[RMDB]
RNA sequence: GGGAACGACUCGAGUAGAGUCGAAAAAAAACCUUGCUCAAACACAAUGUUCCAUCCGUGCCGUUUAUUAUUACACAUUUGUGCUAUUUCGAUGGGCGUUAAUAUCUGUUUAUCGUAAUCAUGAGACAUACCACGCACCAAUUUUGAAAAAUCAUAAUCAAGAAGAGUAAUUCGUUACUCUUCUUGAAAAAGAAACAACAACAACAAC
Reactivity to 2A3 in 0.01 (KOAc 150mM, MgCl2 10mM, bicine 150mM(pH8.5), 24C), signal-to-noise 4, nucleotides 027 to 156: a000a010a010a020c020c010u020u040g000c010u020c050a080a070a000c030a010c040a080a070u090g040u090u020c030c010a050u000c050c070g040u030g010c010c010g040u120u090u010a070u090u060a060u070u200a060c020a000c020a090u020u090u160g030u060g020c010u100a080u050u080u080c030g010a020u010g000g000g030c000g000u060u080a070a030u070a050u110c110u120g060u040u040u060a040u060c060g010u020a100a030u080c080a040u110g030a010g000a050c000a020u090a040c030c030a020c040g050c030a050c040c000a060a050u070u170u040u080g100a100a020a000a010a000u300c300a050u300a300a000
Reactivity to DMS in 0.01 (KOAc 150mM, MgCl2 10mM, bicine 150mM(pH8.5), 24C), signal-to-noise 2, nucleotides 027 to 156: a060a040a060a060c030c020u000u000g020c050u000c040a140a110a090c070a120c030a080a030u000g010u000u010c020c010a090u000c070c040g020u000g040c020c020g000u000u000u010a030u010u000a130u000u010a110c050a070c070a160u000u000u000g050u010g040c030u010a090u000u010u000c030g000a070u010g000g010g000c020g030u000u000a050a080u010a050u020c020u020g050u000u000u000a110u020c060g020u000a060a080u010c090a090u010g010a050g000a040c020a090u010a050c040c010a030c010g000c010a050c020c040a010a010u000u000u000u010g000a060a020a030a060a060u000c020a030u010a050a220
Chemical mapping of a 207-nucleotide RNA with 2A3 and DMS. The RNA was probed in 150 mM KOAc, 10 mM MgCl2 and 150 mM bicine (pH 8.5) at 24 C.